RNA sequence: GGGAACGACUCGAGUAGAGUCGAAAAGAAAGGCCUUCUUGAUGCGGAUGAUACUGCAUCAGGAACUGAUUGGCUGAUGCUUUUUACCCAACAGUACCUGAUGCAUUGCCUUCAGCAUUGAAAGAAACCUCGAAACUCGAUUCGUCGAGUUUCGAGGAAAAGAAACAACAACAACAAC
Reactivity to 2A3 in 0.01 (KOAc 150mM, MgCl2 10mM, bicine 150mM(pH8.5), 24C), signal-to-noise 2, nucleotides 027 to 126: g090a060a100a000g060g010c000c000u020u000c010u010u070g010a010u000g000c000g010g020a010u010g010a010u010a160c080u010g000c000a000u000c000a000g000g000a010a000c000u040g020a300u080u090g000g000c130u070g040a100u110g010c010u100u050u020u070u290a040c030c000c000a000a000c000a000g030u000a100c000c000u000g010a000u000g000c020a010u000u050g000c000c000u000u040c000a000g000c000a010u000u080g060a100a090a050g000a000a090a050